[RMDB]
RNA sequence: GGGAACGACUCGAGUAGAGUCGAAAAUAACGAGAACUUUGAGAAUGACUCCCGCGCUGCCGAGGCUGGCCUAGGUGCCAAACUGAGUGCUGGUAUUAUUGGUGCUGGUGUGGACCCGCUUAGCUAUGUUCCUAUGGUCGGUGUCACUGGUAAGGGCUGAAAUAGUUUUUUUCGAAAAACUAUUUCAAAAAGAAACAACAACAACAAC
Reactivity to 2A3 in 0.01 (KOAc 150mM, MgCl2 10mM, bicine 150mM(pH8.5), 24C), signal-to-noise 3, nucleotides 027 to 156: u110a020a030c030g010a020g030a150a060c090u210u210u230g040a100g060a110a140u080g030a060c010u030c030c000c020g000c020g020c030u050g000c020c000g030a020g010g030c010u010g030g000c000c010u030a040g030g020u050g040c030c040a080a080a030c030u080g030a010g080u080g030c070u050g000g020u060a070u200u060a090u100u210g040g000u040g010c030u050g000g030u050g010u030g060g010a020c010c030c020g000c030u030u060a010g000c020u040a040u140g030u040u040c010c020u040a060u210g010g020u070c020g010g010u030g040u050c050a030c070u010g010g030u050a080a070g050g000g000c040
Reactivity to DMS in 0.01 (KOAc 150mM, MgCl2 10mM, bicine 150mM(pH8.5), 24C), signal-to-noise 2, nucleotides 027 to 156: u010a070a150c030g010a130g020a090a090c040u000u000u010g010a090g010a140a080u000g010a110c050u000c020c000c030g050c080g020c030u020g000c050c040g020a100g000g040c000u000g000g030c030c020u020a110g020g010u020g030c020c030a040a070a060c040u010g010a140g030u000g010c020u010g020g020u000a060u010u000a100u000u000g010g030u000g020c060u000g000g000u000g030u040g030g000a070c040c020c030g020c050u000u000a050g030c030u000a090u000g010u000u000c000c010u000a120u010g030g010u000c040g010g020u000g000u000c040a110c040u000g020g000u000a060a060g010g000g010c120

Conditions: 150 mM KOAc, 10 mM MgCl2 and 150 mM bicine (pH 8.5), 24 C. Structure probing data (2A3 and DMS) for a 207-nucleotide construct. DMS adducts were read by reverse transcription with MarathonRT. For 2A3 the reverse transcriptase was SuperScript II with manganese.